[RMDB]
RNA sequence: GGGAACGACUCGAGUAGAGUCGAAAACAUCAUCACGCGUGAGGAGUGAACGAGUUGCUGAGUGACGAAGUCGGUCAAUUUCUUCGUUUAUUGAGAGGUCUUUAUCAAUAUACGUGUCCGUUUGUUCGACAUAUGCCUCUGGCUGAUAAUAAUCAUAGAUAUUCCAUGCGUUCGCGCAUGGAAUAUCAAAAGAAACAACAACAACAAC
Reactivity to 2A3 in 0.01 (KOAc 150mM, MgCl2 10mM, bicine 150mM(pH8.5), 24C), signal-to-noise 3, nucleotides 027 to 156: c030a090u140c000a010u060c030a000c110g060c030g030u060g020a050g020g000a030g050u060g030a000a090c130g000a020g010u100u030g030c070u110g030a070g030u080g010a030c000g030a050a030g020u070c060g060g000u030c080a080a070u150u040u050c030u070u050c030g040u000u010u070a070u060u090g030a080g010a000g030g080u020c060u040u230u070a090u060c050a060a030u030a020u020a100c040g010u010g030u010c050c000g030u010u110u070g060u040u170c050g000a000c000a030u120a030u060g030c020c000u060c040u040g090g030c000u020g040a020u060a160a020u110a010a040u280c070a080u230a180
Reactivity to DMS in 0.01 (KOAc 150mM, MgCl2 10mM, bicine 150mM(pH8.5), 24C), signal-to-noise 1, nucleotides 027 to 156: c050a120u000c060a130u000c010a080c010g020c080g000u000g000a130g000g060a100g030u000g000a050a130c000g000a250g000u010u000g040c020u000g040a120g090u000g010a050c030g000a090a190g030u000c020g030g010u000c070a070a190u010u000u000c020u000u000c080g000u000u020u000a060u030u010g000a050g000a060g060g000u000c050u000u000u000a210u020c030a080a050u000a120u000a030c090g010u000g000u000c080c130g000u010u000u000g050u000u010c040g000a030c020a070u010a100u000g000c020c000u000c000u020g020g060c010u010g000a100u010a040a090u040a110a060u020c040a050u000a090

Structure probing data (2A3 and DMS) for a 207-nucleotide construct. DMS adducts were read by reverse transcription with MarathonRT. Reactivities are rounded to 0.1 and cut off at 0 and 3. The DMS profile rests on 2,150 reads. The reactions ran in a buffer of 150 mM KOAc, 10 mM MgCl2 and 150 mM bicine (pH 8.5), at 24 C. For 2A3 the reverse transcriptase was SuperScript II with manganese.